[RMDB]
Structure probing data (DMS and 2A3) for a 177-nucleotide construct. Values cover nucleotides 27 to 126.

RNA sequence: GGGAACGACUCGAGUAGAGUCGAAAAGUUCAAUGCUUCGGCAUUGAACAAAAGAAAGGUCAUGCGAGACCAAACGCAACUCAGAAAAACUGAGAAAAAGAUAAAGAACUGUCUUCGGACAGUUCAAGGUAUGUUUUAAGUUCGCUUAAAACAUACCAAAAGAAACAACAACAACAAC
Reactivity to DMS in 0.01 (KOAc 150mM, MgCl2 10mM, bicine 150mM(pH8.5), 24C), signal-to-noise 3, nucleotides 027 to 126: g000u010u000c000a000a010u010g000c010u010u030c180g050g040c010a010u010u000g010a010a000c000a040a060a160a150g000a110a070a160g000g010u000c040a130u010g000c170g050a140g000a070c050c050a010a110a090c140g020c090a060a160c010u010c000a020g020a140a090a060a140a180c010u000g000a030g010a030a050a080a130a080g000a100u010a060a090a120g000a000a010c000u000g000u000c000u000u000c170g020g000a000c000a000g000u000u000c000a030a020
Reactivity to 2A3 in 0.01 (KOAc 150mM, MgCl2 10mM, bicine 150mM(pH8.5), 24C), signal-to-noise 3, nucleotides 027 to 126: g000u010u000c000a000a000u000g000c000u030u080c200g100g030c000a000u000u010g000a000a000c000a000a050a000a000g040a050a120a010g020g000u040c040a040u210g100c060g080a110g040a080c010c000a040a020a020c030g000c030a050a140c010u000c000a000g160a080a220a060a110a150c010u020g010a000g040a060a110a030a000a000g090a030u210a070a150a030g000a000a000c000u000g010u000c010u020u090c230g080g010a010c000a000g000u000u000c000a000a010